Chemical mapping of a 207-nucleotide RNA with 2A3. It was measured as part of the RMDB library M2RFOK. Values are in units of 0.01, from 0 to 300, in steps of 10. 2A3 adducts were read by reverse transcription with SuperScript II with manganese. The reactions ran in a buffer of 150 mM KOAc, 10 mM MgCl2 and 150 mM bicine (pH 8.5), at 24 C.
RNA sequence: GGGAACGACUCGAGUAGAGUCGAAAAACUGCCAUACGUGGCAGAAACACGCCUUACCAGGACUAAACAGCGUGUCUAAAAAACAGUCCUUCAUACCUGAUCUGGAGGGUAGAUCAGGAAUAGUAAAAAAAUCGGGUGAAGUUCGCUUCACCCGAAAGAGUAGGGUCUUGUUCGCAAGACCCUACUCAAAAGAAACAACAACAACAAC
Reactivity to 2A3 in 0.01 (KOAc 150mM, MgCl2 10mM, bicine 150mM(pH8.5), 24C), signal-to-noise 1, nucleotides 027 to 156: a000c020u010g010c020c000a060u060a090c170g070u010g000g000c000a010g000a000a000a000c000a000c000g010c030c000u020u030a020c020c060a000g000g010a020c010u030a100a080a070c020a000g010c000g010u010g000u020c150u070a000a000a010a010a000a000c070a020g020u000c020c000u020u090c030a070u080a070c000c000u000g000a000u000c000u020g110g040a060g090g040g010u090a000g000a020u000c010a010g020g000a000a040u070a010g040u010a030a000a030a030a000a000a060u040c000g000g030g000u000g000a010a000g000u090u070c110g020c120u000u000c000a000c000c000c010g000a000a010a000